[RMDB]
RNA sequence: GGGAACGACUCGAGUAGAGUCGAAAAUCAUCGCCGACCACACCGACAAGUAUGGCCAAGGUUACUUUAGUUACGACAGUAAGAAGGCUGGUACCGUUACCGUCUCGCACUUGCGUUUUGGCGAUAAGAAUGGAAAUUACUUCGGUAAUUUCCAUUCAAAAGAAACAACAACAACAAC
Reactivity to DMS in 0.01 (KOAc 150mM, MgCl2 10mM, bicine 150mM(pH8.5), 24C), signal-to-noise 6, nucleotides 027 to 126: u010c100a060u000c020g020c020c000g020a050c100c030a060c110a060c090c050g010a100c190a070a070g020u000a030u010g010g010c020c030a080a090g030g010u000u000a060c050u000u000u000a070g010u000u000a050c090g010a100c160a080g010u010a040a100g000a100a100g010g000c020u000g030g010u000a060c120c090g010u000u010a040c030c030g000u000c030u000c060g010c170a090c060u010u000g010c050g000u000u000u000u010g020g010c010g000a020u010a070a110
Reactivity to 2A3 in 0.01 (KOAc 150mM, MgCl2 10mM, bicine 150mM(pH8.5), 24C), signal-to-noise 6, nucleotides 027 to 126: u080c010a010u020c010g000c010c010g060a060c030c030a020c010a020c070c010g110a100c040a060a010g010u020a070u130g050g010c020c030a080a060g090g030u060u040a030c010u110u140u160a080g070u060u080a070c110g050a040c090a030g020u040a060a070g080a090a020g080g010c030u050g030g030u050a050c010c070g060u050u060a030c000c010g030u010c030u030c060g030c010a040c040u020u060g020c030g050u030u020u070u100g010g000c000g000a000u020a040a030